[RMDB]
RNA sequence: GGGAACGACUCGAGUAGAGUCGAAAAAUGGUGACCUUCGGGUCACCAUGGUGCGUAGCUGCGUUAAUUUAAUAGCUACGGUUAAUAAAUUUAAUUAACGCAAUGGAGCCUGCUUCGGCAGGCUCAAAUAACCACAUUUCUUCGGAAAUGUGGUUAUAAAAGAAACAACAACAACAAC
Reactivity to DMS in 0.01 (KOAc 150mM, MgCl2 10mM, bicine 150mM(pH8.5), 24C), signal-to-noise 1, nucleotides 027 to 126: a000u000g000g000u000g000a030c010c020u000u020c190g070g010g020u010c000a010c000c000a000u000g000g020u020g030c020g000u010a010g010c010u010g000c000g010u000u000a010a000u000u000u010a020a030u000a130g000c020u000a010c020g010g000u000u000a030a120u010a070a100a180u000u030u000a010a010u000u010a020a000c020g030c010a140a170u010g030g000a020g010c000c000u000g000c000u000u010c240g020g000c010a010g000g030c000u000c000a000a040
Chemical mapping of a 177-nucleotide RNA with DMS. The reactions ran in a buffer of 150 mM KOAc, 10 mM MgCl2 and 150 mM bicine (pH 8.5), at 24 C. For DMS, 1,448 sequencing reads were counted.